[RMDB]
RNA sequence: GGGAACGACUCGAGUAGAGUCGAAAAGGAACGGUAGAAAAGAGCGAGCCUCUCGAUACGAAAGGGCCGCGAGCCUAUCGAGUUUGGAGUCAUCCGGGCCGAAGGGUUGAGACGCACCCACAGACGGUAGCCCCGUAGUUCGCUACGGGGAAAAGAAACAACAACAACAAC
Reactivity to DMS in 0.01 (KOAc 150mM, MgCl2 10mM, bicine 150mM(pH8.5), 24C), signal-to-noise 9, nucleotides 027 to 129: g030g020a040a100c050g000g030u020a020g020a040a060a110a070g010a120g010c000g020a060g000c100c000u000c040u000c060g020a130u050a120c110g040a040a070a070g000g000g060c040c010g000c090g000a030g000c090c020u000a080u040c030g020a040g000u010u020u030g000g050a000g020u020c000a060u000c000c000g020g010g020c000c050g000a150a120g010g020g000u040u020g030a050g020a080c040g020c010a120c000c000c000a100c160a110g000a060c080g000g060u050a100g000
Reactivity to 2A3 in 0.01 (KOAc 150mM, MgCl2 10mM, bicine 150mM(pH8.5), 24C), signal-to-noise 9, nucleotides 027 to 129: g060g000a060a020c060g020g020u090a040g070a030a100a040a000g060a020g020c040g020a030g030c010c010u040c020u020c040g070a090u100a190c090g080a110a070a050g020g010g020c000c010g050c030g010a020g010c000c010u080a170u050c020g010a010g010u020u110u130g120g000a010g010u110c020a020u010c010c010g010g020g000c010c010g020a070a060g020g000g000u020u020g010a010g000a010c040g000c020a060c000c020c010a050c020a040g110a030c060g040g030u110a030g050